[RMDB]
RNA sequence: GGGAACGACUCGAGUAGAGUCGAAAAGAUGUAGCGAGCGUAAAUGUUAAAAUAUAGAACCUGACAAUCGCAAGUUAGGGGAGCGAUCGGCAAUCAAGAAGCUACCGGCGGAAAACGCCUAUAGAAAGGGAAAUAAUAACUUCGGUUAUUAUUUCCCAAAAGAAACAACAACAACAAC
Reactivity to DMS in 0.01 (KOAc 150mM, MgCl2 10mM, bicine 150mM(pH8.5), 24C), signal-to-noise 3, nucleotides 027 to 126: g010a070u010g020u000a090g000c020g010a110g000c040g030u040a050a080a080u030g000u020u010a050a080a090a110u030a140u020a100g010a210a130c040c020u000g020a020c020a020a130u010c060g020c190a080a130g040u000u020a020g000g000g010g000a120g020c090g010a090u020c030g010g000c070a080a030u020c070a050a050g010a040a150g020c050u000a020c100c180g000g000c000g010g000a050a070a050a150c030g000c000c000u010a070u010a040g010a080a100a050
Reactivity to 2A3 in 0.01 (KOAc 150mM, MgCl2 10mM, bicine 150mM(pH8.5), 24C), signal-to-noise 3, nucleotides 027 to 126: g050a060u110g010u060a020g070c010g050a020g030c040g060u100a180a100a070u110g040u060u170a090a080a170a050u190a030u010a030g120a020a050c000c010u000g010a000c020a060a090u110c100g040c080a040a010g000u050u070a010g010g000g020g000a060g040c030g030a070u040c020g050g030c070a010a060u050c020a010a140g050a050a000g040c040u040a080c040c060g000g000c000g000g000a010a140a020a080c000g010c000c000u050a050u030a090g140a080a050a010